[RMDB]
About this RNA:
Structure probing data (DMS and 2A3) for a 177-nucleotide construct.
RNA sequence: GGGAACGACUCGAGUAGAGUCGAAAAACUACUGGUUAGCCGUCCGCUGGACAUCGACCUGCCGCAGUUAAUCGUCAAGGAUACGCGUCUGGCGUUUGGUGAACUGGCUGCAUGGGUUCGCCAGCAAGGCGCGGAAUUAAUUCGUUAAUUCCGCGCCAAAAGAAACAACAACAACAAC
Reactivity to DMS in 0.01 (KOAc 150mM, MgCl2 10mM, bicine 150mM(pH8.5), 24C), signal-to-noise 1, nucleotides 027 to 126: a080c040u000a090c030u040g030g020u000u000a120g000c010c010g000u000c040c080g030c020u020g000g020a090c120a040u010c060g000a090c010c010u010g000c160c060g030c090a040g010u000u000a060a050u000c030g000u000c050a040a090g040g000a110u020a030c030g000c300g000u000c040u010g000g020c030g000u020u010u000g000g010u000g000a030a000c080u000g010g000c040u010g010c090a090u030g000g020g010u000u000c080g060c000c010a020g010c140a080a090
Reactivity to 2A3 in 0.01 (KOAc 150mM, MgCl2 10mM, bicine 150mM(pH8.5), 24C), signal-to-noise 2, nucleotides 027 to 126: a000c050u110a040c040u050g020g050u070u040a020g010c000c040g020u020c040c050g060c030u030g000g030a030c000a080u070c030g000a020c040c000u030g060c040c030g010c020a050g020u070u150a040a070u120c000g010u000c070a040a030g070g060a090u080a210c040g020c010g090u100c130u040g080g030c020g020u030u020u040g060g000u040g000a040a020c020u030g050g000c030u070g010c030a130u130g060g000g000u070u080c020g000c010c020a000g080c050a080a060
The 2A3 profile rests on 1,564 reads.